[RMDB]
RNA sequence: GGGAACGACUCGAGUAGAGUCGAAAAGAUAUGGAGCGGAAGCGAUAAGCUGUGUGGUCGGAAACGACCACCAGCUUUUGACGCUUUACUCCUAAGUCAAAGUAUUGCGCCUUCGGGCGCAAUACAAGCUUAAUGUAAGGUUCGCCUUACAUUAAGCAAAAGAAACAACAACAACAAC
Reactivity to 2A3 in 0.01 (KOAc 150mM, MgCl2 10mM, bicine 150mM(pH8.5), 24C), signal-to-noise 3, nucleotides 027 to 126: g020a010u090a040u150g000g000a020g030c270g160g090a010a000g000c000g010a050u030a130a020g000c010u000g090u090g000u000g250g000u000c000g020g040a070a080a070c010g000a000c000c000a000c000c000a010g000c020u010u010u010u020g000a000c000g000c000u010u010u010a020c010u000c000c010u010a120a030g040u020c060a180a020a040g000u000a010u000u000g010c000g020c020c000u060u070c190g160g000g000c000g000c000a000a000u000a000c000a000a010
Reactivity to DMS in 0.01 (KOAc 150mM, MgCl2 10mM, bicine 150mM(pH8.5), 24C), signal-to-noise 5, nucleotides 027 to 126: g010a050u000a300u000g010g000a010g000c020g000g010a010a010g020c000g020a140u000a030a020g010c000u000g000u010g020u000g000g000u000c000g010g000a090a100a190c000g010a010c000c000a000c000c000a000g000c000u000u000u000u000g020a180c050g000c000u000u000u010a060c010u000c000c000u010a040a140g000u000c030a090a120a180g010u000a000u000u000g010c000g020c000c000u000u010c230g020g010g030c000g000c000a000a000u000a000c010a060a080
Conditions: 150 mM KOAc, 10 mM MgCl2 and 150 mM bicine (pH 8.5), 24 C. Chemical mapping of a 177-nucleotide RNA with 2A3 and DMS. As a SHAPE reagent, 2A3 marks flexible, mostly unpaired nucleotides at the ribose 2'-OH. Source: RMDB library TTRDEL, as collected in RNAgym. The 2A3 profile rests on 11,274 reads. In probing experiments dimethyl sulfate is read out at A N1 and C N3, which are open when not base-paired.